[RMDB]
RNA sequence: GGGAACGACUCGAGUAGAGUCGAAAAGAUAUGGAGCCUCAUAGACAUGCCUGGUCGGAAACGACUGGGCAACAGCUAUAGGCUCCUAAGUCAAACGUAAAGUGGGACUUCGGUCCCACUUUACGAAGAUUUAAUGGUACUUCGGUACCAUUAAAUCAAAAGAAACAACAACAACAAC
Reactivity to 2A3 in 0.01 (KOAc 150mM, MgCl2 10mM, bicine 150mM(pH8.5), 24C), signal-to-noise 1, nucleotides 027 to 126: g010a000u030a040u060g000g000a000g010c000c000u040c100a030u020a080g170a260c110a130u100g000c000c020u020g020g000u010c000g000g000a000a000a020c000g010a010c000u000g030g040g000c010a010a020c020a020g020c000u000a010u010a000g010g000c010u000c000c010u000a000a000g000u000c000a030a030a080c010g010u000a010a000a000g000u020g000g000g000a030c010u150u150c300g040g000u010c000c000c000a000c000u000u000u000a010c000g000a010a000
Reactivity to DMS in 0.01 (KOAc 150mM, MgCl2 10mM, bicine 150mM(pH8.5), 24C), signal-to-noise 3, nucleotides 027 to 126: g000a010u000a280u000g000g020a020g000c000c000u000c300a010u000a010g010a060c070a180u000g000c000c000u020g000g010u000c000g010g000a070a070a140c010g020a020c000u000g010g010g010c000a000a000c230a120g000c010u010a010u010a010g020g000c000u000c000c010u000a010a050g000u000c010a140a110a230c010g000u010a000a010a020g010u000g010g010g010a010c000u010u010c200g020g020u000c000c000c000a010c010u000u000u000a000c000g000a080a060